[RMDB]
RNA sequence: GGGAACGACUCGAGUAGAGUCGAAAAUGCACUUGGACGAAGAAUGGCUUAGAAAUCAAGGCCUGAUUCAAGAAAACCCCCGCACCGAAAGGUCGGGGGUUUUUUGUUGGGCGUAAUCUAUAACGGAAGUAAUAGACUCUUUCGAGAGUCUAUUACUAAAAGAAACAACAACAACAAC
Reactivity to DMS in 0.01 (KOAc 150mM, MgCl2 10mM, bicine 150mM(pH8.5), 24C), signal-to-noise 3, nucleotides 027 to 126: u020g010c050a050c040u010u010g000g010a060c070g000a080a060g020a090a040u000g010g000c030u010u000a080g010a140a080a120u030c170a140a170g010g030c000c000u000g000a130u010u010c110a080a080g000a000a010a000a010c000c010c010c000c020g010c220a010c010c000g000a140a090a160g000g000u010c020g000g000g000g000g000u000u000u000u000u020u000g000u010u000g000g000g000c030g000u010a070a060u020c110u010a050u010a070a030c210g010g010a130